Annotation: Structure probing data (2A3 and DMS) for a 177-nucleotide construct. For 2A3 the reverse transcriptase was SuperScript II with manganese. For DMS, 17,713 sequencing reads were counted. It was measured as part of the RMDB library OK1LIB. For DMS the reverse transcriptase was MarathonRT.

RNA sequence: GGGAACGACUCGAGUAGAGUCGAAAACUUGCAGGACACCGUCAGCGAACUGCAACCGGUGCUGCGUCAGGUCGGCGAUUUGGAGCGUAUCCUUGCGCGUCUGGCGCUGCGCACCGCGCGUCCGCGCGUGGUGCUCCUAGUUCGCUAGGAGCACCACAAAAGAAACAACAACAACAAC
Reactivity to 2A3 in 0.01 (KOAc 150mM, MgCl2 10mM, bicine 150mM(pH8.5), 24C), signal-to-noise 9, nucleotides 027 to 126: c010u020u060g000c020a030g010g070a080c030a040c110c050g130u160c070a040g030c030g070a070a040c020u070g000c020a020a020c030c010g010g000u000g000c010u010g000c000g000u010c000a000g030g140u120c060g150g080c040g150a300u060u030u110g020g000a030g020c140g110u240a080u040c000c000u010u060g010c020g000c000g010u000c010u020g000g000c000g000c000u040g010c030g000c000a010c010c010g010c020g000c010g040u050c040c030g050c010g010c030
Reactivity to DMS in 0.01 (KOAc 150mM, MgCl2 10mM, bicine 150mM(pH8.5), 24C), signal-to-noise 6, nucleotides 027 to 126: c120u000u000g000c010a030g000g010a120c070a090c110c040g020u010c120a120g020c030g010a070a140c040u020g010c040a050a100c210c020g020g010u000g010c010u020g000c020g000u000c000a000g000g000u030c070g020g020c010g020a100u020u020u000g000g000a020g000c290g000u060a120u010c010c000u000u020g000c000g000c000g020u000c000u000g010g000c010g000c000u010g000c200g020c010a020c010c020g010c090g030c090g020u010c050c030g010c030g030c110